Structure probing data (2A3 and DMS) for a 177-nucleotide construct.

RNA sequence: GGGAACGACUCGAGUAGAGUCGAAAAGCAGUAAAGGCAAAGAGGUUAUGGAAAGCUUUAUCAAAGCAGAGCAAAACGGCAAAAAUAUUUGCGCCGUUUAUGCACAUAACGAUGAUAUGGCAAUUGGGUUCAUCCUGCUAUUCGUAGCAGGAUGAACAAAAGAAACAACAACAACAAC
Reactivity to 2A3 in 0.01 (KOAc 150mM, MgCl2 10mM, bicine 150mM(pH8.5), 24C), signal-to-noise 2, nucleotides 027 to 126: g040c030a020g050u180a030a080a080g030g030c020a030a050a030g050a050g060g010u100u120a030u090g030g070a120a060a000g000c020u100u100u030a150u070c000a010a070a000g060c020a000g000a000g100c000a000a000a000a000c000g040g000c000a000a000a020a080a030u300a290u100u130u100g050c040g000c010c020g020u000u000u010a050u010g000c000a020c010a020u100a030a010c020g020a020u060g000a010u040a020u100g020g050c010a070a090u140u110g130g050
Reactivity to DMS in 0.01 (KOAc 150mM, MgCl2 10mM, bicine 150mM(pH8.5), 24C), signal-to-noise 3, nucleotides 027 to 126: g020c010a060g020u000a080a090a130g000g040c040a060a070a120g000a060g020g030u000u040a060u010g020g030a080a180a130g000c010u000u000u010a050u000c100a060a040a300g030c060a080g020a100g040c000a000a020a000a010c020g010g000c000a010a180a010a090a120u000a140u000u010u000g000c300g000c020c000g030u020u000u000a030u010g000c000a170c120a070u000a060a090c050g000a070u010g000a030u010a010u010g000g040c030a030a110u000u010g010g000